[RMDB]
RNA sequence: GGGAACGACUCGAGUAGAGUCGAAAACGGUGAUUAUACCCCUACCACUACCUAAUCCUCAGGGGCUACCAGUUACUUGCUGUACACACUUUUAAAGUACUUUCUAAUUGUGGACCAUGAGUGGCAGUGCUAUGGAUGUCUUCGGACAUCCAUAGCAAAAAGAAACAACAACAACAAC
Reactivity to DMS in 0.01 (KOAc 150mM, MgCl2 10mM, bicine 150mM(pH8.5), 24C), signal-to-noise 1, nucleotides 027 to 126: c170g010g000u000g010a100u000u000a140u010a260c000c000c000c030u000a130c160c000a030c060u020a150c020c050u000a050a140u000c060c050u030c180a030g040g030g000g000c040u020a020c100c020a050g000u000u010a060c070u000u000g000c100u000g010u000a060c120a070c060a060c050u000u000u000u000a100a050a070g010u010a070c170u000u000u000c050u000a030a040u000u000g020u020g010g000a120c040c010a050u000g000a030g030u000g010g010c050a090g010
Reactivity to 2A3 in 0.01 (KOAc 150mM, MgCl2 10mM, bicine 150mM(pH8.5), 24C), signal-to-noise 1, nucleotides 027 to 126: c060g010g010u050g030a110u000u190a050u100a180c000c000c000c000u020a020c000c030a060c030u060a080c000c020u100a030a080u110c000c000u090c040a020g000g000g040g080c020u010a020c060c000a000g100u070u080a070c030u100u170g070c020u030g090u080a010c030a020c000a020c000u180u110u110u180a030a290a080g060u110a180c080u070u130u010c030u020a050a110u050u010g020u000g020g020a000c020c030a060u080g020a020g020u040g000g030c020a010g010

Record summary: The record gives the reactivity of an RNA of 177 nucleotides to DMS and 2A3. High 2A3 reactivity points to a flexible backbone, as in loops and unpaired stretches.